[RMDB]
RNA sequence: GGGAACGACUCGAGUAGAGUCGAAAAGCCUGCGGCUUAAUUUGACUCAACACGGGGAAACUUACCAGGUCAGGACAUGGGAAGGAUUGACAGAUUGAGAGUUCUUUCUUGAUUCCUUGGGUGGUGGAGUAGCUAGCGAAUUCGUUCGCUAGCUACUAAAAGAAACAACAACAACAAC
Reactivity to DMS in 0.01 (KOAc 150mM, MgCl2 10mM, bicine 150mM(pH8.5), 24C), signal-to-noise 1, nucleotides 027 to 126: g000c000c000u040g030c170g020g080c000u030u000a090a090u010u000u000g000a060c020u000c000a100a030c000a160c070g010g000g000g010a070a050a050c180u050u000a100c010c000a080g000g000u020c050a040g000g030a090c040a030u020g000g000g000a000a030g000g000a000u000u000g000a160c210a070g010a080u050u040g000a300g000a060g010u000u010c000u000u010u000c000u000u010g000a170u090u000c000c000u040u000g000g000g010u000g000g000u000g000g000
Reactivity to 2A3 in 0.01 (KOAc 150mM, MgCl2 10mM, bicine 150mM(pH8.5), 24C), signal-to-noise 3, nucleotides 027 to 126: g020c010c070u250g180c240g030g000c010u040u040a040a020u110u050u020g010a010c000u000c000a010a030c030a010c080g000g000g000g010a010a170a000c000u040u090a040c000c000a040g000g160u020c030a000g020g010a040c010a020u190g010g060g000a030a010g040g020a050u040u090g080a070c100a060g200a120u180u200g080a100g010a060g110u020u010c020u000u060u000c000u050u130g130a240u020u000c000c000u080u060g040g010g000u000g010g010u050g060g020